RNA sequence: GGGAACGACUCGAGUAGAGUCGAAAAAUGGCCUGUAAAGUCAGACAGGCUCAGGUUCAAGUCUGGCUCACAUAUACUAGACUGGCCUUGUGAACUUGGCCAAGACACUUGACUUUUCUAAGCUUCUUAGGGUUUUUGUGGUGCUUAAGAAAGAAAAUCAGUUCGUAGUUUUCGAACUACGAACUGAAAAAGAAACAACAACAACAAC
Reactivity to 2A3 in 0.01 (KOAc 150mM, MgCl2 10mM, bicine 150mM(pH8.5), 24C), signal-to-noise 1, nucleotides 027 to 156: a010u060g030g010c000c000u000g010u010a040a090a060g030u070c040a050g010a080c000a060g010g030c010u050c000a020g000g030u090u090c040a010a010g060u000c030u010g030g000c030u110c070a040c010a030u290a040u030a140c040u080a070g050a110c000u030g000g000c010c000u030u050g050u030g080a030a030c010u000u030g000g030c000c010a080a010g090a010c010a010c130u060u090g030a040c000u030u050u000u020c010u010a080a040g020c010u060u070c010u040u150a110g050g090g010u060u030u040u210u110g070u030g010g040u010g000c000u040u000a060a010g030a070a210a030g100a010a070a010a060